[RMDB]
Chemical mapping of a 177-nucleotide RNA with DMS and 2A3. The DMS profile rests on 1,350 reads. Source: RMDB library OK2TRN, as collected in RNAgym. For DMS the reverse transcriptase was MarathonRT. The RNA was probed in 150 mM KOAc, 10 mM MgCl2 and 150 mM bicine (pH 8.5) at 24 C.
RNA sequence: GGGAACGACUCGAGUAGAGUCGAAAAUGUCACGGAAGGCAGGGUGCUCCGAGUGGGUUUGUUCUGCCCAACAAGUGGCCAUUUCUACAUCCGCAAAUCCCGCCCCGGUUUCCGAACUAGAUGUACGCUUCCUCAUAUCCUUCGGGAUAUGAGGAAGAAAAGAAACAACAACAACAAC
Reactivity to DMS in 0.01 (KOAc 150mM, MgCl2 10mM, bicine 150mM(pH8.5), 24C), signal-to-noise 2, nucleotides 027 to 126: u020g000u010c050a090c040g010g000a140a150g000g010c040a020g020g000g000u000g000c050u010c040c030g010a090g010u010g000g000g020u000u030u000g020u020u000c080u000g010c030c000c040a060a140c100a130a150g040u000g000g020c130c120a100u010u000u000c040u020a050c110a080u000c010c040g010c090a070a110a110u010c030c000c030g000c020c010c010c000g000g000u000u000u000c000c020g000a080a090c140u010a120g000a040u020g020u000a090c220g020
Reactivity to 2A3 in 0.01 (KOAc 150mM, MgCl2 10mM, bicine 150mM(pH8.5), 24C), signal-to-noise 1, nucleotides 027 to 126: u010g000u010c010a010c050g010g010a060a020g010g100c020a010g130g000g000u050g040c030u100c050c060g000a080g110u300g020g020g040u160u060u050g050u050u060c020u020g000c000c040c000a090a110c050a120a060g030u120g010g020c070c030a050u030u060u000c020u040a050c000a050u070c050c000g050c060a020a060a000u020c020c000c010g000c040c010c000c000g110g010u000u030u010c020c000g030a060a010c020u020a050g070a190u070g050u050a060c070g010